[RMDB]
RNA sequence: GGGAACGACUCGAGUAGAGUCGAAAAGAUAUGGACCUCUCUCAUGGAGCUGAUGUCGGAAACGACAUGAUCAGCUAUGAAGUGACAUGAGAGGUCCUAAGUCAAAACGCUACGUUCGCGUAGCGAAGUGUAAUCUAGAGUUCGCUCUAGAUUACACAAAAGAAACAACAACAACAAC
Reactivity to DMS in 0.01 (KOAc 150mM, MgCl2 10mM, bicine 150mM(pH8.5), 24C), signal-to-noise 8, nucleotides 027 to 126: g010a040u000a300u010g000g000a010c000c010u000c020u000c070u010c110a030u000g000g010a040g040c010u000g010a050u000g010u000c000g010g000a080a070a160c000g010a010c010a110u010g020a160u000c020a010g020c000u000a200u010g020a160a210g020u010g010a100c300a070u010g000a010g010a020g010g010u000c000c000u000a010a080g000u000c030a090a070a110a230c020g000c010u000a000c000g020u000u010c230g000c020g030u000a010g010c000g010a020a080
Reactivity to 2A3 in 0.01 (KOAc 150mM, MgCl2 10mM, bicine 150mM(pH8.5), 24C), signal-to-noise 9, nucleotides 027 to 126: g010a010u040a030u090g000g000a000c010c000u000c000u000c010u040c070a040u030g070g150a020g000c000u020g010a010u020g010u000c000g010g010a030a030a030c000g010a000c010a030u090g130a180u090c010a000g000c010u070a300u170g090a120a090g190u090g170a020c040a170u120g000a010g000a000g010g000u000c000c000u000a020a000g010u000c010a010a030a080a140c020g010c000u010a000c010g030u050u080c300g010c010g230u000a000g000c010g010a120a020
Record summary
This 177-nucleotide RNA was probed chemically with DMS and 2A3. The 2A3 profile rests on 43,061 reads. For 2A3 the reverse transcriptase was SuperScript II with manganese. Values cover nucleotides 27 to 126. Reactivities are rounded to 0.1 and cut off at 0 and 3.